[RMDB]
RNA sequence: GGGAACGACUCGAGUAGAGUCGAAAAUCAUCAAGAAGUAGGCUAAGGCCAAUUGCUUGGUGGUGAAAGUAGAGGGAAGGUAGCACUUCGACGCCUCUAAGUACGCUGUGGGAGUAGUGCUUAAAUCAAAAGCACAGCGACUUCGGUCGCUGUGCAACUAUGCUUGAACGUUCGCGUUCAAGCAUAGAAAAGAAACAACAACAACAAC
Reactivity to DMS in 0.01 (KOAc 150mM, MgCl2 10mM, bicine 150mM(pH8.5), 24C), signal-to-noise 1, nucleotides 027 to 156: u000c020a020u000c030a050a030g020a030a040g020u010a140g040g040c000u010a110a190g120g020c000c000a060a060u020u000g010c030u000u000g000g020u000g000g040u010g000a070a070a150g020u000a080g010a050g040g000g010a120a040g000g000u000a080g020c020a040c100u000u000c020g010a110c030g000c010c040u000c060u000a090a120g000u000a060c070g000c000u000g010u010g030g000g000a090g040u000a050g040u000g010c020u000u010a090a100a100u000c050a070a070a070a190g010c000a010c010a030g000c000g020a020c000u010u000c300g000g010u000c000g020c000u030g010u000g020c010a000a010
Reactivity to 2A3 in 0.01 (KOAc 150mM, MgCl2 10mM, bicine 150mM(pH8.5), 24C), signal-to-noise 4, nucleotides 027 to 156: u020c000a000u000c000a010a010g030a070a030g050u090a060g030g000c020u070a010a200g210g000c010c020a030a080u040u040g040c000u010u000g000g000u010g000g000u020g000a100a060a000g050u070a000g010a020g000g040g010a020a020g050g020u080a030g060c040a030c070u040u030c040g060a050c060g060c010c000u000c020u040a070a030g050u030a030c030g010c090u060g010u080g070g020g050a070g000u100a030g010u020g000c010u060u100a050a060a120u130c090a090a020a020a000g010c000a000c010a000g010c010g000a000c000u020u050c170g100g000u000c010g000c000u000g010u000g010c000a000a000